[RMDB]
RNA sequence: GGGAACGACUCGAGUAGAGUCGAAAAUUGAUCAACCUAAGACAGAAAAUAUUCAUUCAUCAUUACAAAGGAAGUGACAUUACUCUAGUGCAGAUUUGAUGUGCUUAUCUUUCAGAAUUUUUAUUUCCACUUUAUAAGAUAUGUGUUAAGAAGGUCACUGAUAGUAUCCGUUCGCGGAUACUAUCAGAAAAGAAACAACAACAACAAC
Reactivity to DMS in 0.01 (KOAc 150mM, MgCl2 10mM, bicine 150mM(pH8.5), 24C), signal-to-noise 1, nucleotides 027 to 156: u010u000g020a100u000c020a120a240c010c020u020a030a100g020a170c050a160g050a080a040a080a120u000a050u000u010c060a110u000u020c040a160u000c090a110u000u030a120c100a030a030a120g000g000a040a050g060u000g040a100c040a050u000u000a030c280u000c010u000a090g000u000g020c110a050g030a170u000u000u010g010a060u000g040u010g030c030u000u000a030u000c010u010u000u000c010a090g000a020a000u000u000u000u000u000a070u080u020u000c020c020a150c060u000u010u020a170u020a060a110g010a150u000a080u000g000u010g000u000u000a060a090g020a060a140g010g030u000c020a140
Reactivity to 2A3 in 0.01 (KOAc 150mM, MgCl2 10mM, bicine 150mM(pH8.5), 24C), signal-to-noise 3, nucleotides 027 to 156: u070u120g030a010u030c010a020a090c010c020u110a090a020g040a070c080a010g160a070a100a020a050u130a060u090u090c040a000u070u060c010a040u030c010a030u040u150a090c080a050a040a010g030g010a030a010g050u060g180a020c010a020u000u070a030c000u010c030u030a050g150u060g190c050a010g060a130u040u140u240g030a010u070g010u020g000c020u060u080a160u200c000u020u030u040c050a010g050a060a070u040u040u000u060u110a020u020u110u040c020c010a090c050u160u190u090a200u040a150a040g030a060u090a070u200g040u000g040u030u030a080a090g030a070a050g120g000u070c080a000